Source: RMDB library OK1LIB, as collected in RNAgym. Structure probing data (2A3 and DMS) for a 177-nucleotide construct. For 2A3, 1,753 sequencing reads were counted. For DMS, 1,526 sequencing reads were counted. Reactivities are given for positions 27 through 126. The reactions ran in a buffer of 150 mM KOAc, 10 mM MgCl2 and 150 mM bicine (pH 8.5), at 24 C.
RNA sequence: GGGAACGACUCGAGUAGAGUCGAAAAGAAGACGUGACGAAAAGUCACGUCAAUACAGAGACUACGCAACUCUGAAAAAGACAACAAAAGUCUAAAAGCGUAGCAGGAUCGAGAGAUCCUGAAAAGACCUCCUCCACUAGUUCGCUAGUGGAGGAGGAAAAGAAACAACAACAACAAC
Reactivity to 2A3 in 0.01 (KOAc 150mM, MgCl2 10mM, bicine 150mM(pH8.5), 24C), signal-to-noise 2, nucleotides 027 to 126: g140a110a020g000a000c020g000u000g030a010c070g060a070a210a170a120g000u000c000a000c000g000u000c000a020a000u030a000c000a000g010a000g030a000c000u010a000c010g000c020a110a030c020u020c000u000g070a050a020a000a030a010g040a010c070a300a000c040a070a190a100a010g000u000c010u040a000a020a000a000g010c000g000u000a000g000c000a000g000g000a000u030c040g000a010g000a010g000a080u000c030c000u000g000a000a000a000a000g040a010
Reactivity to DMS in 0.01 (KOAc 150mM, MgCl2 10mM, bicine 150mM(pH8.5), 24C), signal-to-noise 2, nucleotides 027 to 126: g000a120a070g000a030c010g000u000g030a000c010g020a100a100a180a210g000u000c000a000c010g000u000c000a020a100u020a230c010a050g000a080g000a090c000u020a000c020g000c030a110a000c000u000c000u070g000a020a070a170a080a030g000a000c020a030a160c300a160a030a090a110g080u000c000u000a000a040a020a260g000c000g000u000a010g000c010a000g000g000a000u000c000g010a300g030a050g000a030u030c000c000u000g000a060a060a110a060g000a130